[RMDB]
The record gives the reactivity of an RNA of 207 nucleotides to DMS and 2A3. It was measured as part of the RMDB library OK3TST. Conditions: 150 mM KOAc, 10 mM MgCl2 and 150 mM bicine (pH 8.5), 24 C. For DMS the reverse transcriptase was MarathonRT.
RNA sequence: GGGAACGACUCGAGUAGAGUCGAAAACGCAUGCGAAAGCAUGCGGCUAUGCUAAUGCAUGGCGACCGCGAUCAUGUAGAGCAGGCGGCGAUAGUGGUUAUUAUUCCGCUAUCGAUUACCAGUGUCUGUUAUUAUUCAGAUACAUGGACCUCUACUACAGUCGAUAUUAGUUCGCUAAUAUCGACUGAAAAGAAACAACAACAACAAC
Reactivity to DMS in 0.01 (KOAc 150mM, MgCl2 10mM, bicine 150mM(pH8.5), 24C), signal-to-noise 4, nucleotides 027 to 156: c020g020c010a010u000g000c010g010a190a130a240g040c000a010u000g000c000g010g010c030u000a010u000g010c040u010a130a160u010g020c020a020u000g020g030c040g020a140c010c020g010c090g020a170u020c130a120u000g000u000a030g000a030g000c060a100g050g030c040g030g010c010g010a000u000a010g040u000g000g030u010u010a170u000u000a300u010u000c000c010g010c000u000a010u000c010g020a100u000u010a030c010c010a190g010u000g010u000c010u010g020u020u010a080u010u000a250u010u010c010a030g000a050u000a010c010a090u000g020g000a180c100c010u010c000u000a020c000u010a280
Reactivity to 2A3 in 0.01 (KOAc 150mM, MgCl2 10mM, bicine 150mM(pH8.5), 24C), signal-to-noise 7, nucleotides 027 to 156: c000g000c000a000u000g000c010g060a070a000a010g000c000a000u000g000c000g000g000c000u000a000u000g000c030u180a300a080u300g000c000a010u000g000g000c030g040a070c000c000g000c010g030a090u150c040a090u120g000u000a000g000a010g030c210a120g170g000c020g010g000c000g000a000u000a000g000u010g070g050u070u070a120u250u060a160u270u060c000c000g000c000u000a000u000c000g000a010u010u070a040c000c000a000g000u000g010u000c010u010g090u030u060a190u220u080a130u140u110c000a000g000a010u000a010c060a150u010g010g000a060c000c000u000c000u000a000c010u010a010